[RMDB]
RNA sequence: GGGAACGACUCGAGUAGAGUCGAAAAGAGCUUUUUCUGCAGGCUGUAUUCCUUGUGGCACAUCAAAAAUUCUAGGAAGUACAGACACUAUCUUGCUAGGCAGUAAUUGUAUAGCAGGAAGUGAAAGUAAUGGAAAUGUGCCUUACCUGCAGCAAAAUAGUCCUCGUCCAUUCGUGGACGAGGACUAAAAAGAAACAACAACAACAAC
Reactivity to 2A3 in 0.01 (KOAc 150mM, MgCl2 10mM, bicine 150mM(pH8.5), 24C), signal-to-noise 1, nucleotides 027 to 156: g110a020g020c030u170u040u030u090u000c000u010g010c010a000g030g000c030u060g040u090a130u080u100c000c040u010u050g020u100g030g040c000a000c000a000u030c050a000a020a110a020a000u170u030c150u050a020g000g190a150a140g030u030a000c030a000g190a020c000a050c000u300a300u200c000u000u000g000c000u000a000g010g030c000a000g100u300a300a080u120u000g030u030a040u000a020g010c000a000g000g020a000a000g000u000g010a030a000a000g020u030a140a060u060g020g040a080a050a000u000g000u000g000c030c000u000u140a000c000c000u040g000c000a000g010c010a000a000a010a010

About this RNA
Chemical mapping of a 207-nucleotide RNA with 2A3. The 2A3 profile rests on 462 reads. Values cover nucleotides 27 to 156. The reactions ran in a buffer of 150 mM KOAc, 10 mM MgCl2 and 150 mM bicine (pH 8.5), at 24 C.